[RMDB]
RNA sequence: GGGAACGACUCGAGUAGAGUCGAAAAACAUGGAGAGAACGAAGACAAGUUUAAAGUGGAAGGUGGAUAAAAUCCAUGCCUUUUUCCUCUACUGAUUCACACUCUCUGGAAUCCUUGUCCUAGUAUCGCAUUUAGUAUCGUUCGCGAUACUAAAUGCAAAAGAAACAACAACAACAAC
Reactivity to DMS in 0.01 (KOAc 150mM, MgCl2 10mM, bicine 150mM(pH8.5), 24C), signal-to-noise 5, nucleotides 027 to 126: a060c060a120u020g000g000a030g000a030g010a110a100c280g000a050a090g010a100c130a110a040g010u000u040u030a040a030a060g020u000g000g000a030a030g000g010u000g000g000a040u020a040a060a060a300u010c010c000a050u030g000c030c040u000u000u020u010u010c230c030u010c060u030a030c000u010g010a040u000u000c040a060c300a120c010u010c040u010c010u000g000g000a060a100u010c040c040u010u030g010u000c050c000u000a090g000u030a040u020c120
Reactivity to 2A3 in 0.01 (KOAc 150mM, MgCl2 10mM, bicine 150mM(pH8.5), 24C), signal-to-noise 9, nucleotides 027 to 126: a000c070a090u150g040g000a010g000a010g030a070a020c100g020a050a040g210a070c080a120a020g010u050u110u200a200a170a020g040u060g040g030a010a030g020g040u050g000g010a030u120a110a150a010a040u010c010c000a030u190g120c030c030u110u120u010u060u030c010c010u000c000u020a020c000u020g040a060u030u020c020a030c020a020c060u010c000u000c010u000g010g030a030a030u060c000c040u050u090g060u050c020c010u040a080g050u080a100u160c090
Chemical mapping of a 177-nucleotide RNA with DMS and 2A3. Source: RMDB library OK1LIB, as collected in RNAgym. The RNA was probed in 150 mM KOAc, 10 mM MgCl2 and 150 mM bicine (pH 8.5) at 24 C. For DMS the reverse transcriptase was MarathonRT.